An RNA of 177 nucleotides, treated with DMS and read out base by base. Source: RMDB library TTRDEL, as collected in RNAgym. Reactivities are given for positions 27 through 126. For DMS the reverse transcriptase was MarathonRT.
[RMDB]
RNA sequence: GGGAACGACUCGAGUAGAGUCGAAAAGAUAUGGAUCAUGGCAGAGUGCCCUUUCGGAAACGAAAGGCUGCACGACGAAGCCAUGAGUCCUAAGUCAAAGCGGUACGGGGUUCGCCCCGUACCGCAAGAAGUAUUUUUUCUUCGGAAAAAAUACUUCAAAAGAAACAACAACAACAAC
Reactivity to DMS in 0.01 (KOAc 150mM, MgCl2 10mM, bicine 150mM(pH8.5), 24C), signal-to-noise 2, nucleotides 027 to 126: g000a000u010a000u010g010g000a130u010c000a000u010g000g000c000a010g000a030g000u000g010c020c000c000u000u000u010c000g010g010a000a000a010c000g010a010a020a010g000g020c300u010g000c000a010c020g000a120c210g010a160a130g000c000c000a000u000g000a010g000u000c000c000u010a000a010g000u000c010a080a040a130g000c000g020g000u000a000c000g040g010g000g020u000u010c300g000c000c000c000c000g040u020a000c010c000g010c000a000a000